[RMDB]
An RNA of 177 nucleotides, treated with DMS and 2A3 and read out base by base.
The DMS profile rests on 1,345 reads.
2A3 adducts were read by reverse transcription with SuperScript II with manganese.
It was measured as part of the RMDB library OK1LIB.
The reactions ran in a buffer of 150 mM KOAc, 10 mM MgCl2 and 150 mM bicine (pH 8.5), at 24 C.

RNA sequence: GGGAACGACUCGAGUAGAGUCGAAAACAAACAACAAAGGACAAAGGAAAAACAAAAGUCCUGCGCGCGAAAACAAAAGAAAAGAAAAGAAGAAAGAGUAGCUUACGCGUGCAAAGCUACAAACAAACAUGACGUAUCACUUCGGUGAUACGUCAUGAAAAGAAACAACAACAACAAC
Reactivity to DMS in 0.01 (KOAc 150mM, MgCl2 10mM, bicine 150mM(pH8.5), 24C), signal-to-noise 1, nucleotides 027 to 126: c020a030a030a070c220a070a050c130a010a180a000g000g000a010c040a070a110a120g000g000a040a170a070a150a100c060a060a130a070a100g000u000c000c000u000g000c080g070c000g010c000g000a160a050a040a020c300a030a000a070a060g000a050a040a120a070g000a030a010a070a000g030a030a070g010a010a060a080g000a130g000u050a000g000c000u000u000a010c060g000c000g000u000g000c000a170a050a000g050c010u000a000c000a070a070a080c200a120a000a000
Reactivity to 2A3 in 0.01 (KOAc 150mM, MgCl2 10mM, bicine 150mM(pH8.5), 24C), signal-to-noise 1, nucleotides 027 to 126: c060a050a000a000c000a050a000c010a010a150a030g090g040a000c000a000a150a000g060g050a200a230a050a040a000c130a020a200a010a010g000u000c000c000u020g000c000g000c030g000c030g140a040a010a000a000c220a030a070a030a020g190a030a060a010a000g100a000a070a000a000g220a000a030g030a100a080a000g040a020g000u020a000g000c000u000u000a020c090g000c000g060u020g000c020a000a040a000g000c010u010a000c010a000a050a000c000a030a010a000